[RMDB]
RNA sequence: GGGAACGACUCGAGUAGAGUCGAAAAUUUUCUUGUAGAUAGAUCGUUUCUUGUUCAUUUUGUUCGAUUUUUUUUCUACAAUGCUCCGCAUCUUGUAAGUAUUUAAGAUAGUGAUCAUACGCAAGAAUCGACUUCUAAGAUUCGUCUUAGAAGUCGAAAAAGAAACAACAACAACAAC
Reactivity to DMS in 0.01 (KOAc 150mM, MgCl2 10mM, bicine 150mM(pH8.5), 24C), signal-to-noise 2, nucleotides 027 to 126: u000u000u020u010c010u000u000g010u000a030g010a100u000a060g000a030u000c010g000u010u000u000c020u010u000g010u010u010c160a110u000u000u000u000g020u000u000c040g010a000u000u000u010u010u010u010u020u020c000u000a020c020a010a020u010g000c080u010c050c080g010c120a100u010c030u000u000g010u000a060a140g030u000a020u000u010u000a050a070g010a040u000a100g000u000g000a200u010c070a070u010a060c050g000c020a030a020g000a040a140
Reactivity to 2A3 in 0.01 (KOAc 150mM, MgCl2 10mM, bicine 150mM(pH8.5), 24C), signal-to-noise 2, nucleotides 027 to 126: u040u020u040u010c010u000u000g000u010a050g020a080u010a010g000a010u010c010g060u020u080u100c050u080u140g160u130u120c160a210u180u180u160u120g050u000u020c010g010a060u040u040u000u080u000u000u000u050c000u010a010c010a010a020u050g020c020u070c090c000g060c050a060u000c050u000u010g030u040a200a170g020u020a140u080u110u040a100a040g060a110u120a080g190u120g190a020u060c010a000u070a020c010g000c020a000a000g000a050a070
This 177-nucleotide RNA was probed chemically with DMS and 2A3. For 2A3 the reverse transcriptase was SuperScript II with manganese. For DMS the reverse transcriptase was MarathonRT. The data come from the RNA Mapping Database (RMDB), library OK2TST. The RNA was probed in 150 mM KOAc, 10 mM MgCl2 and 150 mM bicine (pH 8.5) at 24 C.